Source: RMDB library OK2TRN, as collected in RNAgym.
Chemical mapping of a 177-nucleotide RNA with DMS and 2A3.
As a SHAPE reagent, 2A3 marks flexible, mostly unpaired nucleotides at the ribose 2'-OH.
DMS adducts were read by reverse transcription with MarathonRT.
RNA sequence: GGGAACGACUCGAGUAGAGUCGAAAAGUGUGUUGCCUAAAAGGCUAGCCUCAUGCUGGUUGUGCUAACUUGGCUCCCUACAGGCAGGGAGUACUGAAGGGCAAGAGGCUAUGUACUGCCAGCUAGACUAUCCGAUUAUAUUCGUAUAAUCGGAUAGAAAAGAAACAACAACAACAAC
Reactivity to DMS in 0.01 (KOAc 150mM, MgCl2 10mM, bicine 150mM(pH8.5), 24C), signal-to-noise 9, nucleotides 027 to 126: g020u010g020u000g010u000u010g010c010c010u000a070a090a140a150g010g010c010u000a040g010c010c010u000c050a110u000g010c010u000g010g010u010u000g010u000g020c050u000a060a100c040u000u000g010g010c080u000c010c010c010u000a110c150a090g010g010c130a120g000g000g000a050g020u000a020c040u000g000a130a070g000g000g010c100a060a130g000a060g010g000c040u000a020u010g020u000a040c050u000g000c040c020a050g010c030u000a090g000a300
Reactivity to 2A3 in 0.01 (KOAc 150mM, MgCl2 10mM, bicine 150mM(pH8.5), 24C), signal-to-noise 7, nucleotides 027 to 126: g090u090g020u030g040u120u140g010c010c030u110a140a150a050a030g030g000c010u010a010g030c010c010u070c030a060u120g000c000u030g030g060u070u040g030u050g070c020u050a070a090c020u050u040g040g000c010u080c000c010c000u040a070c080a090g100g060c010a010g080g070g040a050g020u050a100c010u040g050a030a020g040g000g010c020a020a030g040a020g100g000c040u020a010u040g020u010a040c020u020g020c000c000a010g000c010u030a030g020a060